RNA sequence: GGGAACGACUCGAGUAGAGUCGAAAAGCGUACUACGUUGAGGGAUUAGCAAGGUUAUGGUCGGUUCCCAAAUAGGAACCGAACGUCUGAUGACCUAAUCCUCCCCACCAACGUAUCGCAAAACUUUUGCUCACCGAUUCGUCGGUGAGCAAAAGAACAACUAUUUCACGUUCGCGUGAAAUAGUUGAAAAGAAACAACAACAACAAC
Reactivity to 2A3 in 0.01 (KOAc 150mM, MgCl2 10mM, bicine 150mM(pH8.5), 24C), signal-to-noise 5, nucleotides 027 to 156: g020c010g020u080a100c040u000a010c010g000u000u000g010a060g000g000g000a020u050u050a040g060c130a160a120g110g020u190u140a110u230g060g020u000c000g000g000u010u020c020c030c000a130a130a080u200a070g010g000a000a000c010c010g000a030a010c010g060u040c110u170g150a180u140g030a090c010c010u000a010a020u010c010c010u030c040c010c000c000a040c000c010a000a000c000g000u010a010u300c040g000c020a020a000a030a080c000u000u000u010u000g010c000u000c000a000c000c000g020a040u070u040c180g050u020c000g130g000u000g000a000g010c000a000a000a000a000g000a000a000
Reactivity to DMS in 0.01 (KOAc 150mM, MgCl2 10mM, bicine 150mM(pH8.5), 24C), signal-to-noise 2, nucleotides 027 to 156: g050c000g010u000a070c090u000a010c000g030u000u000g000a300g010g030g020a050u000u000a050g030c080a100a230g020g030u000u000a040u000g010g020u000c000g030g000u000u010c000c040c020a060a190a270u000a080g000g000a020a010c000c000g010a010a020c020g020u000c070u000g010a130u000g000a180c300c000u000a040a040u020c040c050u000c140c050c050c050a300c100c010a020a030c010g000u000a050u010c020g050c040a090a060a110a130c000u000u000u000u010g020c000u000c010a030c020c000g000a090u000u020c260g020u010c000g040g020u000g010a010g000c000a000a000a020a010g010a060a160